[RMDB]
RNA sequence: GGGAACGACUCGAGUAGAGUCGAAAACUUUGGCAAGCGCACCGCAGGAGCUUCUUUUUGUAGAUGUACAAAAUGUGCAAGGUCAUUGUGCUGCUGAUGCGCUGAAGCAUGACUGGAGAUUACACUUAUGAUGCACGAACAUGCGCAAGUCCAUGUGGAAAGAAAGAGCAUUCGUGCUCUUUCUUUCAAAAGAAACAACAACAACAAC
Reactivity to DMS in 0.01 (KOAc 150mM, MgCl2 10mM, bicine 150mM(pH8.5), 24C), signal-to-noise 2, nucleotides 027 to 156: c040u000u000u000g030g030c030a100a130g030c010g010c000a070c000c030g010c050a060g010g000a120g010c040u000u000c030u010u010u000u000u010g020u000a030g020a210u000g020u000a080c040a040a020a040a060u000g030u000g000c070a090a090g010g010u000c030a170u000u020g000u000g020c000u000g000c010u010g030a080u000g000c000g000c020u010g000a060a140g020c020a060u000g010a090c080u000g010g020a180g000a220u000u000a090c050a030c050u000u010a140u000g020a110u010g020c010a070c040g010a090a110c020a080u010g010c020g000c010a070a120g020u020c020c010a090u000g010u030g010
Reactivity to 2A3 in 0.01 (KOAc 150mM, MgCl2 10mM, bicine 150mM(pH8.5), 24C), signal-to-noise 4, nucleotides 027 to 156: c010u050u040u160g050g000c060a090a060g020c010g000c010a030c000c040g000c020a020g040g080a030g030c000u110u030c010u040u100u030u010u020g040u010a090g040a300u160g070u170a010c030a020a020a040a060u140g060u050g070c050a030a030g040g070u090c030a100u040u230g040u100g120c000u010g020c000u060g020a180u010g020c000g000c000u010g000a020a000g000c010a010u050g030a050c040u020g100g010a070g050a100u080u180a070c070a020c050u100u040a030u210g110a060u050g040c020a010c090g050a160a020c040a060u040g030c020g000c080a080a010g030u020c000c000a030u110g010u080g130